[RMDB]
RNA sequence: GGGAACGACUCGAGUAGAGUCGAAAAGGUGGACAGGUCCUCGUGCUCACGCGACGCCUUCCCGGCGGGAUGGAUCUCGCCUAUCUUCCUCAUCCGUGGGAAGCUGUGGAGACGAGGCUCCGUACGGCCACUGAUUCGAUUUCGAUCGAAUCAGUGGAAAAGAAACAACAACAACAAC
Reactivity to DMS in 0.01 (KOAc 150mM, MgCl2 10mM, bicine 150mM(pH8.5), 24C), signal-to-noise 4, nucleotides 027 to 126: g040g030u010g030g010a050c070a110g010g000u000c010c000u000c010g030u000g020c010u000c030a070c090g010c140g010a200c170g010c160c040u000u000c000c020c020g010g020c130g020g010g010a050u020g020g010a060u000c060u000c140g040c090c060u010a060u010c060u000u000c020c010u000c150a090u000c060c050g020u010g020g000g010a010a010g010c100u000g010u000g000g000a040g000a070c020g020a020g010g010c040u000c000c000g000u010a080c140g000g020
Reactivity to 2A3 in 0.01 (KOAc 150mM, MgCl2 10mM, bicine 150mM(pH8.5), 24C), signal-to-noise 3, nucleotides 027 to 126: g050g030u050g010g080a040c060a100g000g050u060c000c000u000c000g030u110g260c020u040c030a190c060g100c040g160a080c080g020c010c000u000u000c000c000c010g020g160c050g020g010g020a030u130g050g060a060u050c080u060c110g010c030c000u020a050u010c020u020u020c000c000u040c020a090u050c020c030g030u090g000g000g020a000a010g020c100u190g040u090g060g020a020g010a000c000g000a000g000g020c020u010c000c030g010u050a060c050g120g000